RNA sequence: GGGAACGACUCGAGUAGAGUCGAAAAGUAUGGAUGAACUUGAACCUUGAUAGCGUGCACAUGUAAGAAAUGUCGAAGCUGGUGUUGAGGAAUUUUGCCUGACUUAACCUUUCAACGAGGGAGUCGUGGAUAUGCUGGGAAGGUUGCGCCAUGAUAAAUCGAGGGAGGAAUUCGUUCCUCCCUCGAUAAAAGAAACAACAACAACAAC
Reactivity to 2A3 in 0.01 (KOAc 150mM, MgCl2 10mM, bicine 150mM(pH8.5), 24C), signal-to-noise 1, nucleotides 027 to 156: g060u060a050u140g060g040a020u010g060a050a110c030u020u050g020a020a040c040c010u040u030g090a090u120a060g020c070g080u070g000c050a010c030a080u030g040u090a090a060g000a150a020a070u100g020u000c020g020a060a010g010c100u070g010g030u060g050u060u070g040a030g000g000a040a040u010u030u030u300g060c010c010u000g000a010c000u030u070a160a140c000c000u000u070u020c050a120a030c030g020a060g040g040g000a030g040u000c070g040u060g000g060a010u040a100u070g000c000u020g000g000g000a080a050g060g000u000u020g000c000g030c030c010a010u050g030a040u050a050a000
Reactivity to DMS in 0.01 (KOAc 150mM, MgCl2 10mM, bicine 150mM(pH8.5), 24C), signal-to-noise 1, nucleotides 027 to 156: g040u000a140u000g010g010a040u010g000a030a040c030u030u010g000a110a080c000c000u000u000g020a030u000a030g020c040g010u010g020c000a070c050a070u010g000u000a090a110g000a080a050a120u000g020u000c030g040a020a130g000c020u010g000g020u010g020u010u010g020a160g010g030a080a080u000u000u000u020g000c010c070u000g020a050c060u000u000a060a110c030c000u010u010u010c120a110a130c240g000a080g010g020g020a120g030u000c010g070u010g000g020a100u000a020u000g010c020u000g000g020g000a040a070g030g010u000u000g000c060g010c060c030a060u020g010a130u000a020a070

This 207-nucleotide RNA was probed chemically with 2A3 and DMS. High DMS reactivity at an A or C suggests that its Watson-Crick edge is free. The data come from the RNA Mapping Database (RMDB), library OK3TST. The DMS profile rests on 2,279 reads. For 2A3 the reverse transcriptase was SuperScript II with manganese.